[RMDB]
RNA sequence: GGGAACGACUCGAGUAGAGUCGAAAAUAGCUAGCUACGACAUGCAUGAGACAUGCGAUCUGAUCCGUACUCAGCUAGGUACGCACGAUCCGAGGAUCCGUACGAUCCUAGGUACGAUCCUCAGUACCCACUGGGACAAAUUCGUUUGUCCCAGUGGAAAAGAAACAACAACAACAAC
Reactivity to 2A3 in 0.01 (KOAc 150mM, MgCl2 10mM, bicine 150mM(pH8.5), 24C), signal-to-noise 4, nucleotides 027 to 126: u080a000g030c020u010a010g000c030u060a040c050g100a040c030a040u100g020c000a040u130g060a040g070a210c060a040u020g010c040g080a100u020c070u120g070a090u050c050c030g000u010a020c030u070c080a020g000c020u030a030g040g040u070a020c030g040c020a070c110g060a090u060c060c040g000a020g000g000a000u030c180c100g010u020a000c010g020a080u040c010c020u040a050g010g020u010a010c000g000a010u020c010c000u000c000a000g010u070a080c020
Reactivity to DMS in 0.01 (KOAc 150mM, MgCl2 10mM, bicine 150mM(pH8.5), 24C), signal-to-noise 4, nucleotides 027 to 126: u000a060g010c030u000a060g010c110u000a050c060g010a150c100a070u010g000c040a100u000g000a240g010a100c090a030u000g000c090g000a080u010c120u000g000a070u010c150c040g020u000a020c020u000c110a040g000c030u000a030g010g020u000a040c060g050c190a100c120g000a040u010c080c130g000a020g010g010a010u010c120c090g030u000a020c020g000a090u000c030c040u000a030g000g000u000a010c040g030a030u000c000c010u010c020a090g000u000a080c130